[RMDB]
RNA sequence: GGGAACGACUCGAGUAGAGUCGAAAAAAAAUUUGCGUGUAAAGACGUUGCUGGGACGAGAAAGAAUAAUUGAUAAUUGGACAGAGUUUUCUAACUCUCGUGCUGCUUCUGGUCGUCUUGCCGUUAAGCUAAACGGUAUGUUCGCAUACCGUUUAGCAAAAGAAACAACAACAACAAC
Reactivity to DMS in 0.01 (KOAc 150mM, MgCl2 10mM, bicine 150mM(pH8.5), 24C), signal-to-noise 2, nucleotides 027 to 126: a080a070a030a070u020u010u000g000c030g030u030g020u000a030a020a030g000a010c010g000u000u010g020c000u010g020g000g010a040c010g000a000g010a050a080a020g000a020a010u000a070a090u000u000g010a090u010a100a190u000u000g010g010a150c130a050g000a080g000u010u000u000u010c050u000a070a070c200u000c000u000c060g070u000g000c060u000g020c080u000u010c120u010g010g020u010c030g000u000c000u010u000g030c020c000g020u000u010a030a110
Reactivity to 2A3 in 0.01 (KOAc 150mM, MgCl2 10mM, bicine 150mM(pH8.5), 24C), signal-to-noise 1, nucleotides 027 to 126: a000a000a000a000u040u040u040g000c020g010u240g000u050a080a120a020g010a010c000g000u100u060g000c040u100g000g020g000a010c010g000a020g000a030a050a040g050a090a030u140a150a070u020u060g070a020u080a210a060u080u090g060g000a000c050a090g090a040g080u000u000u140u000c030u010a030a050c030u030c010u000c030g000u060g070c060u020g040c000u130u080c090u150g140g020u040c000g000u000c000u020u000g000c010c000g010u010u030a050a000